Overview:
The record gives the reactivity of an RNA of 177 nucleotides to DMS and 2A3. Reactivities are rounded to 0.1 and cut off at 0 and 3. DMS adducts were read by reverse transcription with MarathonRT. Reactivities are given for positions 27 through 126.
RNA sequence: GGGAACGACUCGAGUAGAGUCGAAAAUGCAAGAGUUAUAGAGAAGAUCGUCCUAUAUUACCUAAGCAGAAGGCUUUAGGAACGGAAAUUGUCUGUGGUAAAGAAGGGGUAUGGUUACCACAAAAUACACGUUCACUGUGUUCGCACAGUGAACGUGAAAAGAAACAACAACAACAAC
Reactivity to DMS in 0.01 (KOAc 150mM, MgCl2 10mM, bicine 150mM(pH8.5), 24C), signal-to-noise 1, nucleotides 027 to 126: u030g000c080a060a090g000a080g000u000u000a070u010a050g020a100g000a070a050g000a060u010c090g040u000c000c010u000a110u050a060u000u000a150c040c000u000a030a080g030c080a170g000a100a060g030g000c050u000u000u000a000g010g000a030a070c110g000g000a060a100a080u000u010g000u000c090u000g010u000g000g000u000a000a060a030g010a090a070g010g000g010g010u000a030u010g000g020u000u000a000c010c000a020c050a000a040a030a050u040a150
Reactivity to 2A3 in 0.01 (KOAc 150mM, MgCl2 10mM, bicine 150mM(pH8.5), 24C), signal-to-noise 2, nucleotides 027 to 126: u160g000c060a060a030g020a030g070u050u100a080u110a050g070a010g020a170a030g060a080u120c050g060u000c010c000u060a070u010a050u110u170a090c010c010u000a020a020g000c020a060g110a300a030g170g010c010u030u070u120a000g010g050a020a010c030g080g120a020a100a110u130u060g040u090c130u060g040u030g000g040u010a000a000a030g040a080a030g000g010g030g000u060a050u110g110g000u030u000a000c030c000a010c000a020a000a000a050u100a020